[RMDB]
RNA sequence: GGGAACGACUCGAGUAGAGUCGAAAAAUCAAUUUUAACAUCUAUCAUGGGUGAUGUAAUAAGUCACUUUAUUCAGGUUUACACCAACAAAAACUUCAAAGGCCUAACAUGCCAUGUAGAACAUGCAGGCAGUUCUGAUGAUUAUGCAAAGGUGAUCCAAAGCAGGUUAUUUCGAUAACCUGCUUUGAAAAGAAACAACAACAACAAC
Reactivity to 2A3 in 0.01 (KOAc 150mM, MgCl2 10mM, bicine 150mM(pH8.5), 24C), signal-to-noise 4, nucleotides 027 to 156: a000u060c040a020a040u070u080u100u220a090a040c030a050u050c080u190a080u110c030a060u130g020g030g000u020g010a040u050g020u070a060a110u120a190a060g010u010c000a010c000u030u100u080a110u080u150c070a020g000g070u010u030u050a050c060a010c020c000a010a030c050a040a150a040a040a050c030u070u070c070a130a070a050g070g000c010c000u030a030a020c000a030u070g040c050c010a050u060g070u090a030g030a150a010c020a040u070g020c020a010g030g000c000a020g020u100u050c070u040g030a050u010g020a020u060u110a060u140g050c040a070a040a060g030g020u020g010a010u040c030
Reactivity to DMS in 0.01 (KOAc 150mM, MgCl2 10mM, bicine 150mM(pH8.5), 24C), signal-to-noise 2, nucleotides 027 to 156: a160u000c060a070a100u000u000u000u000a090a100c010a090u010c050u000a120u010c080a130u020g010g000g010u000g000a060u000g010u000a150a070u000a080a270g010u000c030a060c020u000u000u000a070u010u010c040a060g010g030u000u000u000a090c050a130c030c020a040a120c060a020a050a070a080a110c050u000u000c030a040a030a060g040g000c000c010u010a090a030c020a010u000g010c020c030a110u000g010u020a080g010a040a070c020a010u000g020c010a020g000g040c000a130g000u000u000c050u000g000a080u000g010a100u000u000a060u000g000c040a000a070a080g010g020u010g010a120u000c030

An RNA of 207 nucleotides, treated with 2A3 and DMS and read out base by base. For 2A3 the reverse transcriptase was SuperScript II with manganese. Reactivities are given for positions 27 through 156. It was measured as part of the RMDB library OK3TST.